[RMDB]
RNA sequence: GGGAACGACUCGAGUAGAGUCGAAAAGGGGUCAAGGGAGGAGGCGAUGAAUCUUGGAUUUAUACUGAAGCCUCCACGGUAUUGUCAGAUUCGUUGCCUCCAUCGAUCUUGACGGAGGCACCCAAAACUAUUGGUUGGGUUCGCCCAACCAAUAGAAGCAAUGUAUUUAGUUCGCUAAAUACAUUGCAAAAGAAACAACAACAACAAC
Reactivity to DMS in 0.01 (KOAc 150mM, MgCl2 10mM, bicine 150mM(pH8.5), 24C), signal-to-noise 1, nucleotides 027 to 156: g030g010g060g020u000c000a050a050g010g010g010a090g050g020a020g020g030c020g010a030u000g000a040a040u000c010u000u030g050g000a020u000u010u000a060u010a050c030u000g010a060a200g020c060c010u000c040c030a060c010g030g000u000a010u000u000g020u000c000a070g000a030u000u000c010g030u010u000g000c010c000u000c000c000a070u000c110g000a090u000c040u000u000g000a030c040g050g030a040g110g030c010a120c010c000c020a050a080a090a200c010u000a020u000u010g000g020u000u000g000g010g050u000u010c300g000c040c000c010a010a020c010c010a010a000u000a000g000a100a170
Reactivity to 2A3 in 0.01 (KOAc 150mM, MgCl2 10mM, bicine 150mM(pH8.5), 24C), signal-to-noise 3, nucleotides 027 to 156: g030g010g070g010u000c010a000a010g010g000g000a010g000g000a000g010g000c010g000a010u030g000a010a010u030c090u200u300g100g030a040u100u300u100a010u040a010c020u050g050a130a030g000c000c020u000c000c000a000c000g000g010u010a010u020u040g010u040c140a110g000a020u000u000c010g010u020u000g000c020c010u000c000c000a010u080c000g000a000u010c000u010u010g000a010c010g000g000a000g010g000c010a010c000c000c010a030a080a020a050c000u010a000u010u000g000g020u000u010g030g000g030u020u060c250g080c000c000c000a000a000c000c000a000a000u000a000g000a010a000
This 207-nucleotide RNA was probed chemically with DMS and 2A3. 2A3 adducts were read by reverse transcription with SuperScript II with manganese. The reactions ran in a buffer of 150 mM KOAc, 10 mM MgCl2 and 150 mM bicine (pH 8.5), at 24 C. Source: RMDB library RNAMAK, as collected in RNAgym. The 2A3 profile rests on 5,364 reads. 2A3 is a SHAPE reagent: it acylates the 2'-hydroxyl of flexible nucleotides of all four kinds.